[RMDB]
RNA sequence: GGGAACGACUCGAGUAGAGUCGAAAAGAACCGCAAGGCCGCUGACCGACGGGAUAUUGUGGGGCUUACCACAGGGGACGCGGCGUUAUCACUUGCCUUUUAAGCCGACCGUCUGGGCUGCAUACAAACCACCCAACUAUCUUCGGAUAGUUGGGAACACUUCUAAAUAGUUCGCUAUUUAGAAGUGAAAAGAAACAACAACAACAAC
Reactivity to 2A3 in 0.01 (KOAc 150mM, MgCl2 10mM, bicine 150mM(pH8.5), 24C), signal-to-noise 4, nucleotides 027 to 156: g000a030a020c020c000g010c040a010a030g130g010c010c010g030c050u050g080a070c020c020g040a040c020g020g020g080a110u110a090u220u110g020u040g020g030g020g050c070u070u100a050c000c020a020c000a040g000g010g010g040a010c030g000c020g010g060c010g010u050u060a030u050c020a010c090u020u030g000c010c040u070u150u040u100a060a020g010c020c010g060a100c000c010g030u020c040u070g060g000g000c010u030g000c020a100u150a140c080a040a060a040c030c040a040c010c020c000a000a000c000u000a000u010c000u010u020c050g060g000a000u000a000g000u000u010g000g000g000a000a000
Reactivity to DMS in 0.01 (KOAc 150mM, MgCl2 10mM, bicine 150mM(pH8.5), 24C), signal-to-noise 2, nucleotides 027 to 156: g000a090a100c000c020g020c040a090a140g000g010c010c020g000c020u010g020a300c030c010g010a150c020g000g000g030a140u010a060u010u000g040u000g020g020g000g030c170u010u000a050c020c040a070c030a080g010g030g010g000a190c120g010c000g030g020c020g050u000u010a040u000c070a200c060u000u000g000c040c040u000u000u030u000a040a110g010c050c010g010a120c020c010g020u000c020u000g010g030g020c010u010g030c040a120u000a110c060a060a060a080c030c040a130c000c000c010a000a030c010u000a010u000c000u010u000c300g060g010a020u000a000g010u000u000g000g000g010a000a040